An RNA of 177 nucleotides, treated with DMS and 2A3 and read out base by base. For 2A3 the reverse transcriptase was SuperScript II with manganese.
RNA sequence: GGGAACGACUCGAGUAGAGUCGAAAAGAUAUGGAUUGGUUAGCCAUCGAUCGUGUGAAGGUGGAACAUCAUGUCGGAAACGACAUGAUGUUUGUUACAGCACACGGGAGGCUAGCAAUCCUAAGUCGACUAUACUAUUCUUCGGAAUAGUAUAGUCAAAAGAAACAACAACAACAAC
Reactivity to DMS in 0.01 (KOAc 150mM, MgCl2 10mM, bicine 150mM(pH8.5), 24C), signal-to-noise 8, nucleotides 027 to 126: g000a080u000a300u000g000g010a020u000u000g010g010u000u000a010g010c010c010a300u000c260g000a070u010c010g010u000g010u000g010a040a050g020g030u000g000g000a010a020c000a010u000c000a000u000g000u000c000g010g000a120a100a220c010g010a010c000a000u000g000a000u000g000u000u000u000g010u010u010a040c030a160g000c000a010c000a000c000g010g000g000a040g020g010c000u000a010g000c000a010a000u000c000c000u010a020a110g010u010c090
Reactivity to 2A3 in 0.01 (KOAc 150mM, MgCl2 10mM, bicine 150mM(pH8.5), 24C), signal-to-noise 8, nucleotides 027 to 126: g050a020u130a070u220g030g000a020u030u090g240g110u240u010a000g000c010c040a220u300c120g080a110u070c020g010u010g000u010g070a110a100g170g090u190g140g020a000a000c000a000u010c000a000u000g000u000c010g000g040a070a070a040c010g000a000c010a000u000g000a000u000g000u010u000u000g000u000u070a010c000a020g010c000a000c010a000c000g000g010g000a030g000g000c000u000a000g000c000a000a000u010c000c000u020a140a010g170u100c100
Overview:
The reactions ran in a buffer of 150 mM KOAc, 10 mM MgCl2 and 150 mM bicine (pH 8.5), at 24 C. DMS adducts were read by reverse transcription with MarathonRT. For 2A3, 44,534 sequencing reads were counted.